[RMDB]
RNA sequence: GGGAACGACUCGAGUAGAGUCGAAAAUUGUAAUGUCGUACGGUAUUCUUUGGACGGUAAUUUCAGAACAGAGGUUGAUCCCGACCUAUCUGCUUUCUAUGUUAAGGAUGGUAAAUACUUUACAAGUGACCAGCUCUGUUCGCAGAGCUGAAAAGAAACAACAACAACAAC
Reactivity to DMS in 0.01 (KOAc 150mM, MgCl2 10mM, bicine 150mM(pH8.5), 24C), signal-to-noise 3, nucleotides 027 to 129: u060u030g040u030a090a090u020g020u030c160g050u010a080c120g000g000u050a060u040u020c040u000u070u020g030g050a090c070g000g000u040a060a110u000u000u000c080a060g000a010a020c140a050g000a000g030g060u030u060g020a140u030c000c010c040g030a040c040c010u030a150u050c040u000g030c150u020u030u030c050u030a120u010g030u000u040a030a030g000g000a080u060g030g000u000a020a020a040u010a000c090u000u000u000a020c150a000a050g040u000g020a050c070
Reactivity to 2A3 in 0.01 (KOAc 150mM, MgCl2 10mM, bicine 150mM(pH8.5), 24C), signal-to-noise 4, nucleotides 027 to 129: u140u060g080u070a030a050u070g020u060c030g050u040a040c020g000g010u080a110u130u070c090u020u120u050g040g020a010c010g000g000u020a090a090u060u120u090c030a000g000a110a050c020a020g010a020g020g000u010u000g020a040u020c000c010c000g000a000c000c000u010a130u010c040u010g030c030u060u090u000c070u080a130u080g010u050u050a020a040g010g040a080u070g020g000u030a030a050a040u080a070c000u000u020u030a030c030a000a090g050u010g130a030c020